[RMDB]
RNA sequence: GGGAACGACUCGAGUAGAGUCGAAAAACAGUACCAGCUGGUACGGCAGCUGGUACUGAACUUUCAUGGAGUUAAGAAACCACGUAAACAAAGCGGAACCGAAAAGCUAAACGAGUAGGAAGAAUAAAUAGGUACCACCACUUCGGUGGUGGUACAAGUCACUAGGACUGUUCGCAGUCCUAGUGACAAAAGAAACAACAACAACAAC
Reactivity to 2A3 in 0.01 (KOAc 150mM, MgCl2 10mM, bicine 150mM(pH8.5), 24C), signal-to-noise 2, nucleotides 027 to 156: a000c000a000g000u000a000c050c000a000g010c000u000g000g020u070a070c030g100g010c000a000g000c000u000g000g000u000a010c000u000g000a000a000c000u020u100u110c090a180u110g160g010a090g030u110u050a230a030g110a170a060a010c040c000a050c070g050u140a000a110a150c060a050a130a000g020c020g000g040a000a060c000c000g020a030a030a000a000g010c020u100a250a000a000c010g020a010g000u030a010g060g050a030a030g020a000a070u150a160a020a050u100a060g070g050u000a010c000c000a000c020c010a010c010u030u020c160g020g000u000g000g000u020g000g000u000a000c010a000a000